About this RNA: This 177-nucleotide RNA was probed chemically with DMS and 2A3. The 2A3 profile rests on 733 reads.
RNA sequence: GGGAACGACUCGAGUAGAGUCGAAAACGCAAAGCUGCCGCUCUUAUUUUGAAGAAAUGAGACCAGCAGGGGCAUCCGGGCUGGUACCCGGACUAUCUGCGUGAUCCCUGGUGACUUGAUACAGUCGGCCUACUGCGUCUUUCGAGACGCAGUAGGCAAAAGAAACAACAACAACAAC
Reactivity to DMS in 0.01 (KOAc 150mM, MgCl2 10mM, bicine 150mM(pH8.5), 24C), signal-to-noise 1, nucleotides 027 to 126: c070g000c000a000a100a120g000c010u000g000c010c000g000c300u000c000u000u050a000u000u000u000u070g060a270a240g000a000a040a000u000g000a010g000a030c190c020a170g000c000a060g000g000g000g000c070a300u000c000c020g000g000g000c100u010g000g080u040a300c000c040c000g000g000a010c030u020a130u030c000u010g000c000g010u000g000a100u050c030c000c010u010g000g000u060g010a050c020u010u000g030a110u000a010c220a000g000u000c060g040
Reactivity to 2A3 in 0.01 (KOAc 150mM, MgCl2 10mM, bicine 150mM(pH8.5), 24C), signal-to-noise 2, nucleotides 027 to 126: c050g030c020a080a110a010g150c010u060g090c000c000g020c000u000c000u000u070a020u000u040u020u150g150a070a070g080a080a010a000u040g000a020g010a020c070c020a000g000c010a080g010g000g080g000c000a030u000c000c000g000g030g030c100u240g200g040u090a080c010c000c000g000g000a000c030u170a110u060c010u030g000c040g000u010g040a020u030c020c000c000u000g140g110u130g020a050c010u030u080g030a020u060a110c130a000g000u000c000g000